[RMDB]
The record gives the reactivity of an RNA of 177 nucleotides to DMS and 2A3. 2A3 adducts were read by reverse transcription with SuperScript II with manganese.

RNA sequence: GGGAACGACUCGAGUAGAGUCGAAAAGCAUCAGCUUCCUAGGUAGCUAGGGUUACAGGCUGAGUUUGAACUUGCUAUAGGGCUAACAAGAUGGAUCAGCAGGUAAAAAGCUCUGUAUACAAGCCUACCCCAUUAAAAUGUUCGCAUUUUAAUGGGGAAAAGAAACAACAACAACAAC
Reactivity to DMS in 0.01 (KOAc 150mM, MgCl2 10mM, bicine 150mM(pH8.5), 24C), signal-to-noise 7, nucleotides 027 to 126: g020c040a120u000c020a010g010c010u000u000c000c000u000a020g000g020u010a130g010c000u000a020g010g000g010u010u010a140c300a040g010g010c010u000g010a030g010u000u000u000g010a090a280c030u000u000g010c290u010a040u000a030g000g000g010c010u000a060a120c160a060a090g010a120u000g010g000a100u010c140a070g010c030a080g010g010u000a030a070a080a100a050g000c020u000c020u010g010u000a030u010a040c050a030a050g000c020c020u000a200
Reactivity to 2A3 in 0.01 (KOAc 150mM, MgCl2 10mM, bicine 150mM(pH8.5), 24C), signal-to-noise 5, nucleotides 027 to 126: g020c000a290u040c010a000g000c000u130u080c010c000u020a040g010g100u210a130g180c010u010a010g060g020g030u140u220a050c080a070g030g000c010u020g020a010g000u010u030u070g010a030a020c010u010u020g000c010u010a010u050a070g030g000g010c000u020a050a030c040a080a050g140a170u160g060g040a120u100c050a040g130c020a030g020g130u140a080a090a000a010a010g010c010u010c000u030g030u010a050u020a050c010a000a040g000c000c010u050a050